[RMDB]
RNA sequence: GGGAACGACUCGAGUAGAGUCGAAAAGGGGUCUAGAGUGGCGUACUUGGAUUUAUUUAGCUUUUGACGGUCUGAAGCCUCCACGGACCGAUAAGCUAAAUUGUCAGUACGCGCUAGACGGAGGCACCCAAAAACGGGUGGUUUCGACCACCCGUAACGAAUUGAAGCUGUUCGCAGCUUCAAUUCGAAAAGAAACAACAACAACAAC
Reactivity to 2A3 in 0.01 (KOAc 150mM, MgCl2 10mM, bicine 150mM(pH8.5), 24C), signal-to-noise 1, nucleotides 027 to 156: g020g010g040g000u000c000u000a000g000a040g090u240g070g030c000g010u000a000c000u050u170g130g080a060u210u220u050a000u000u040u000a120g000c010u030u150u140u160g190a160c050g000g000u030c000u010g030a130a040g010c000c000u070c000c050a100c040g000g000a000c000c010g060a060u010a050a010g000c020u000a000a020a000u040u040g040u000c020a020g000u010a010c010g020c010g000c010u000a000g010a020c000g000g020a020g000g010c080a100c020c000c020a130a060a000a050a040c000g000g000g030u000g000g070u080u100u150c150g100a030c000c000a000c000c000c000g000u000a000a020